An RNA of 207 nucleotides, treated with 2A3 and read out base by base.
Values cover nucleotides 27 to 156.
It was measured as part of the RMDB library M2RFPK.
2A3 adducts were read by reverse transcription with SuperScript II with manganese.
The reactions ran in a buffer of 150 mM KOAc, 10 mM MgCl2 and 150 mM bicine (pH 8.5), at 24 C.

[RMDB]
RNA sequence: GGGAACGACUCGAGUAGAGUCGAAAAGAAACGCAAGGCCUCUGACCGACGGGAUAUUGUGGGGCUUACCACAGGGGACGCGGCGUUAUCACUUGCCUUUUAAGCCGACCGUCUGGGCUGCAUACAAACCACCCAACUAUCUUCGGAUAGUUGGGAACUGUUACCGCAUGUUCGCAUGCGGUAACAGAAAAGAAACAACAACAACAAC
Reactivity to 2A3 in 0.01 (KOAc 150mM, MgCl2 10mM, bicine 150mM(pH8.5), 24C), signal-to-noise 2, nucleotides 027 to 156: g000a000a030a000c110g000c020a020a090g090g020c040c000u020c100u100g030a070c070c040g050a000c010g000g000g010a060u080a080u280u070g050u060g010g060g020g070c040u090u160a090c020c000a000c020a040g060g000g000g010a030c030g000c040g160g020c000g000u030u110a150u160c040a020c080u090u190g040c000c000u170u060u090u030a020a020g000c020c000g040a120c030c000g000u000c030u080g000g000g000c010u000g000c000a040u170a100c150a050a080a040c020c020a090c000c000c000a000a000c000u000a000u000c000u040u050c040g060g000a000u000a000g000u000u000g000g000g000a020a000